RNA sequence: GGGAACGACUCGAGUAGAGUCGAAAAAAACACAUUAUUAUAGUACCAAUUCCUGGAGAUUCCUCAAUUACCACUCGAUCCAGACUACUGGACCGGUUGGUCAGGUUAAUUGGAAACCCGGAUGUGAAAUGCUCCUCGGUUUCGACCGAGGAGCAUUAAAAGAAACAACAACAACAAC
Reactivity to 2A3 in 0.01 (KOAc 150mM, MgCl2 10mM, bicine 150mM(pH8.5), 24C), signal-to-noise 1, nucleotides 027 to 126: a010a010a010c130a000c000a000u150u120a130u300u090a110u150a180g040u010a000c000c000a000a020u230u300c000c000u050g090g000a060g050a160u140u230c120c070u020c010a000a080u240u110a020c000c000a010c000u040c000g010a040u000c000c000a000g120a300c110u130a280c090u170g000g000a000c000c000g040g000u000u000g000g000u000c000a000g130g000u020u130a070a000u060u000g010g020a000a010a010c070c060c000g090g030a010u050g000u020g040a040